Annotation
This 177-nucleotide RNA was probed chemically with DMS and 2A3. Values cover nucleotides 27 to 126. The reactions ran in a buffer of 150 mM KOAc, 10 mM MgCl2 and 150 mM bicine (pH 8.5), at 24 C. For DMS the reverse transcriptase was MarathonRT.
RNA sequence: GGGAACGACUCGAGUAGAGUCGAAAAGCGCGACCGCCAACGGAAAUGACGAGCUGGACCUGGUCUACCCCUUUUGGCUCCAAAACGGCUCUACCGGAGGAGGAGGAGGAGGCGGCGGUUCCGGUGGAUUCCAUAUCCCAUUCGUGGGAUAUGGAAUAAAAGAAACAACAACAACAAC
Reactivity to DMS in 0.01 (KOAc 150mM, MgCl2 10mM, bicine 150mM(pH8.5), 24C), signal-to-noise 5, nucleotides 027 to 126: g020c090g020c100g000a090c040c030g010c010c020a070a160c150g010g010a060a070a100u010g010a080c090g000a080g000c030u000g010g010a140c090c040u000g000g010u000c040u000a180c050c010c020c040u000u000u000u010g020g010c020u000c030c050a030a050a090a150c080g000g000c090u000c080u010a070c020c020g000g000a110g010g000a200g000g000a100g000g000a110g000g010a090g000g000c160g010g000c070g000g000u000u000c080c020g010g000u000g020g010
Reactivity to 2A3 in 0.01 (KOAc 150mM, MgCl2 10mM, bicine 150mM(pH8.5), 24C), signal-to-noise 1, nucleotides 027 to 126: g020c020g020c020g030a050c010c010g010c030c020a080a020c040g060g040a070a090a130u150g070a020c070g030a020g040c020u030g090g000a060c010c020u050g040g030u030c030u060a120c000c000c000c000u000u050u050u110g100g050c000u010c010c000a030a070a070a080c020g020g000c020u050c040u170a070c010c000g000g050a080g020g020a030g010g020a050g010g030a070g000g020a040g020g030c040g030g010c040g020g010u060u050c010c000g040g040u040g040g020